[RMDB]
RNA sequence: GGGAACGACUCGAGUAGAGUCGAAAAUAGCGAUAGGAGGGGAUGCUAGGAGUCGGCGGCGACCGAAGCGAGGAGGAAAGCAAAGAAAGCAACGGGGCUAGCGAGUGGAUGUUCCGCCUCCCCGGAGAAGCUCGAACCUUCGGGUUCGAGAAAAGAAACAACAACAACAAC
Reactivity to 2A3 in 0.01 (KOAc 150mM, MgCl2 10mM, bicine 150mM(pH8.5), 24C), signal-to-noise 2, nucleotides 027 to 129: u100a000g080c050g030a020u030a040g000g000a040g000g000g000g000a020u020g020c010u020a020g000g030a020g070u070c010g000g000c030g000g000c050g020a040c010c000g050a030a010g050c010g090a000g020g000a000g000g020a040a040a000g030c000a000a120a020g130a080a040a030g030c010a020a050c050g060g000g000g050c020u030a060g030c020g060a040g010u080g000g090a080u070g140u190u000c060c010g000c000c000u000c000c010c000c020g000g030a000g000a080a010g040
Reactivity to DMS in 0.01 (KOAc 150mM, MgCl2 10mM, bicine 150mM(pH8.5), 24C), signal-to-noise 3, nucleotides 027 to 129: u020a090g020c050g040a120u010a160g030g000a100g050g040g010g060a060u020g000c130u020a070g050g000a050g030u010c000g040g010c160g000g000c000g000a060c000c060g010a120a000g040c050g010a090g010g050a020g010g040a040a080a090g020c190a000a100a100g050a110a090a050g030c030a000a000c150g010g020g000g050c220u020a080g070c110g000a130g000u040g000g020a140u010g000u010u050c000c000g080c030c020u040c010c020c040c090g000g000a130g000a030a040g000